[RMDB]
RNA sequence: GGGAACGACUCGAGUAGAGUCGAAAACCUGACACGUUCGCGUGUCAGGAAACGUCGCUCCGAGAAAUACGCUGGCGUCGCGACGGACGCGACGCUAGCGUAAAACGCCCGACUUCGGUCGGGCGAACACCUUGUAUAGGUUCGCCUAUACAAGGUGAAAAGAAACAACAACAACAAC
Reactivity to 2A3 in 0.01 (KOAc 150mM, MgCl2 10mM, bicine 150mM(pH8.5), 24C), signal-to-noise 1, nucleotides 027 to 126: c000c010u000g000a000c000a010c000g040u080u080c260g020c000g120u020g010u000c000a010g010g000a080a060a000c060g060u030c050g030c030u020c010c020g070a080g070a130a200a010u060a000c020g000c000u020g010g000c000g010u010c020g000c020g070a120c150g120g160a080c050g010c000g020a010c020g000c010u000a000g010c000g000u010a000a000a000a000c030g020c020c000c000g010a030c030u030u050c150g060g000u000c000g010g020g020c000g000a000a000
Reactivity to DMS in 0.01 (KOAc 150mM, MgCl2 10mM, bicine 150mM(pH8.5), 24C), signal-to-noise 2, nucleotides 027 to 126: c000c000u000g000a030c000a020c030g010u000u020c140g040c020g030u010g030u000c000a010g010g010a020a040a110c130g000u010c040g010c010u000c010c040g010a170g000a060a100a110u000a020c000g020c000u000g000g000c020g060u000c010g070c000g040a250c300g000g000a140c090g040c000g000a010c000g010c020u010a000g020c010g010u000a000a010a170a210c040g030c000c000c020g040a000c000u000u020c110g000g030u000c010g010g000g000c000g000a000a060
Annotation: An RNA of 177 nucleotides, treated with 2A3 and DMS and read out base by base. For DMS, 1,374 sequencing reads were counted. The RNA was probed in 150 mM KOAc, 10 mM MgCl2 and 150 mM bicine (pH 8.5) at 24 C. Source: RMDB library M2PK50, as collected in RNAgym.